[RMDB]
The record gives the reactivity of an RNA of 177 nucleotides to 2A3 and DMS. Conditions: 150 mM KOAc, 10 mM MgCl2 and 150 mM bicine (pH 8.5), 24 C. Values cover nucleotides 27 to 126. It was measured as part of the RMDB library OK1LIB. For DMS, 37,996 sequencing reads were counted. For 2A3 the reverse transcriptase was SuperScript II with manganese. Values are in units of 0.01, from 0 to 300, in steps of 10.
RNA sequence: GGGAACGACUCGAGUAGAGUCGAAAAGGCGCGUAGCAAUGUUAGUGAUAAAUUACACCAUAAGUGUAGACGCUAAGACAAUGUGAGCAGCUAGCACUACUGAUGGCGAGACACAACAUGCUAAUGCGAUUAUAUAAUUUUUCGAAAUUAUAUAAUCAAAAGAAACAACAACAACAAC
Reactivity to 2A3 in 0.01 (KOAc 150mM, MgCl2 10mM, bicine 150mM(pH8.5), 24C), signal-to-noise 9, nucleotides 027 to 126: g100g010c020g000c010g060u020a000g000c040a130a170u010g010u010u020a150g010u010g040a090u120a130a120a060u150u100a060c030a040c020c010a030u030a180a120g070u020g010u040a010g030a090c070g000c010u030a110a050g040a080c080a120a130u230g070u100g150a060g070c050a010g010c040u020a010g020c000a010c030u050a010c010u050g030a030u020g020g000c040g030a040g080a030c010a000c000a010a020c000a010u020g000c000u040a100a040u100g020c010
Reactivity to DMS in 0.01 (KOAc 150mM, MgCl2 10mM, bicine 150mM(pH8.5), 24C), signal-to-noise 9, nucleotides 027 to 126: g020g010c050g020c020g010u000a010g000c010a050a050u010g010u000u000a090g020u000g010a140u050a050a060a110u030u010a130c080a100c000c020a040u020a050a130g010u010g010u000a010g000a130c110g010c000u000a030a070g000a100c130a100a090u040g020u030g010a090g000c110a110g000c040u010a030g010c000a110c050u010a030c040u000g010a030u010g000g010c040g010a190g000a120c010a010c010a020a020c020a020u000g000c010u000a010a050u010g000c050